Description
An RNA of 207 nucleotides, treated with 2A3 and read out base by base. 2A3 adducts were read by reverse transcription with SuperScript II with manganese. Reactivities are given for positions 27 through 156. The data come from the RNA Mapping Database (RMDB), library RNAMAK.
RNA sequence: GGGAACGACUCGAGUAGAGUCGAAAAACCUUUGUGCGUCGGGAGAACAUGGGAGGAGUGUCACCGGACCCAUUGGGUCCGCAAGUCACUCUCAUGUUCGAAGAACGACGCACUCUGGUAAAACGGUGUAUCUGUACUUCGGUACAGAUACACCGAACCGGUUACAAUACUUCGGUAUUGUAACCGGAAAAGAAACAACAACAACAAC
Reactivity to 2A3 in 0.01 (KOAc 150mM, MgCl2 10mM, bicine 150mM(pH8.5), 24C), signal-to-noise 1, nucleotides 027 to 156: a000c020c000u030u000u010g000u000g010c000g020u000c000g010g020g000a040g000a010a000c020a020u030g020g000g030a090g110g110a170g140u220g110u170c090a080c110c000g010g000a020c040c030c080a300u240u300g000g000g000u010c000c020g000c030a160a140g010u020c000a000c030u020c020u010c000a000u010g000u010u010c020g000a000a010g000a030a000c000g000a000c040g010c000a000c000u010c000u000g070g020u050a080a060a020a120c000g000g010u020g020u000a000u030c000u000g000u000a000c010u020u140c240g020g010u000a000c000a000g000a000u000a000c000a000c000c010g020a000a050